An RNA of 207 nucleotides, treated with 2A3 and read out base by base.
RNA sequence: GGGAACGACUCGAGUAGAGUCGAAAACGUCCCCGUCGUACAGUAUGGUAACAUAUCUCUCCAAAUAUCUGAGCUUGGGUAUACGGGGAAACCCAACCCCUUGGGAAGAUUGGGUAUAUGGCUAAAUUACAUCGAUUGUACUUCGGUACAAUCGAAACUCACACAAAACCUUCGGGUUUUGUGUGAGAAAAGAAACAACAACAACAAC
Reactivity to 2A3 in 0.01 (KOAc 150mM, MgCl2 10mM, bicine 150mM(pH8.5), 24C), signal-to-noise 1, nucleotides 027 to 156: c020g150u050c000c010c010c000g130u100c030g010u070a110c070a070g040u030a030u150g020g060u110a120a010c000a000u030a000u050c070u050c010u030c100c010a100a130a130u170a160u020c070u030g040a020g130c020u030u030g000g000g010u020a000u000a050c030g000g000g000g070a060a020a020c000c000c000a000a010c000c000c000c000u030u020g020g000g000a010a020g020a050u030u030g020g010g020u010a010u000a000u040g000g030c050u140a180a170a050u150u060a060c050a130u060c000g000a020u000u000g000u000a000c000u000u050c140g130g000u000a000c000a000a000u000c000g000a000a000a000
For 2A3 the reverse transcriptase was SuperScript II with manganese. The 2A3 profile rests on 663 reads.